[RMDB]
The record gives the reactivity of an RNA of 177 nucleotides to DMS. DMS adducts were read by reverse transcription with MarathonRT.

RNA sequence: GGGAACGACUCGAGUAGAGUCGAAAAUCGGCCGGCCGGCCUAGAAACUUGAGCGGAUGAGUUAGUGGUUCCAACGAAUAUUAGAUUCUAUAUGAAUACGUGCGAUAGCUUACGCGCGAAGUAACAAGGGUAUUUUAAUCUUCGGAUUAAAAUACCCAAAAGAAACAACAACAACAAC
Reactivity to DMS in 0.01 (KOAc 150mM, MgCl2 10mM, bicine 150mM(pH8.5), 24C), signal-to-noise 2, nucleotides 027 to 126: u020c140g010g000c060c040g000g030c090c050g030g080c000c040u020a070g000a100a080a100c050u000u010g000a090g000c110g000g020a010u040g000a020g010u000u030a130g040u000g000g000u000u020c010c030a100a070c210g030a020a000u000a010u000u000a010g000a020u000u000c050u000a000u000a000u000g010a020a020u000a010c000g050u030g000c000g010a140u030a160g020c190u000u000a060c010g000c000g000c000g000a070a030g000u060a130a080c150a010a140
Source information: The RNA was probed in 150 mM KOAc, 10 mM MgCl2 and 150 mM bicine (pH 8.5) at 24 C.